[RMDB]
RNA sequence: GGGAACGACUCGAGUAGAGUCGAAAAAGGAUGAAGAUAUGCAUGUGUUUUUACCUAAAACAUAGCAUGCGUCCUUCUUUGUGUAUCUGCUCCUAAAGAGCAAAGCAAGGGCAGCAUGUGGGGUAUGUCGGACCUUGUAAUUCGUUACAAGGUCCGAAAAAGAAACAACAACAACAAC
Reactivity to DMS in 0.01 (KOAc 150mM, MgCl2 10mM, bicine 150mM(pH8.5), 24C), signal-to-noise 2, nucleotides 027 to 126: a060g000g020a070u000g000a110a050g000a100u000a070u000g000c130a100u010g020u000g000u000u000u000u000u010a230c100c070u020a080a030a050a040c100a090u010a130g000c000a000u000g000c000g000u000c000c020u000u000c000u010u000u010g020u010g010u020a120u010c060u000g000c090u000c070c060u000a030a110a120g000a150g010c010a000a000a060g010c150a010a000g020g010g000c000a060g040c000a020u010g030u010g030g020g000g020u000a040u020g010
Reactivity to 2A3 in 0.01 (KOAc 150mM, MgCl2 10mM, bicine 150mM(pH8.5), 24C), signal-to-noise 1, nucleotides 027 to 126: a000g080g000a060u120g030a050a000g010a070u120a040u170g040c070a060u100g040u000g050u050u040u020u040u070a040c040c050u060a040a060a020a010c040a010u080a020g030c000a000u020g000c000g000u000c010c000u000u000c000u030u020u000g050u010g030u030a080u060c020u080g050c070u080c080c010u070a090a110a050g030a010g000c000a000a000a000g020c060a020a020g000g000g000c020a030g000c010a050u000g000u030g010g030g000g000u050a040u100g070
Source information
Chemical mapping of a 177-nucleotide RNA with DMS and 2A3. Conditions: 150 mM KOAc, 10 mM MgCl2 and 150 mM bicine (pH 8.5), 24 C. The data come from the RNA Mapping Database (RMDB), library OK2TRN. Reactivities are given for positions 27 through 126. For 2A3 the reverse transcriptase was SuperScript II with manganese. For DMS, 2,082 sequencing reads were counted. DMS (dimethyl sulfate) methylates the pairing face of unpaired adenines and cytosines.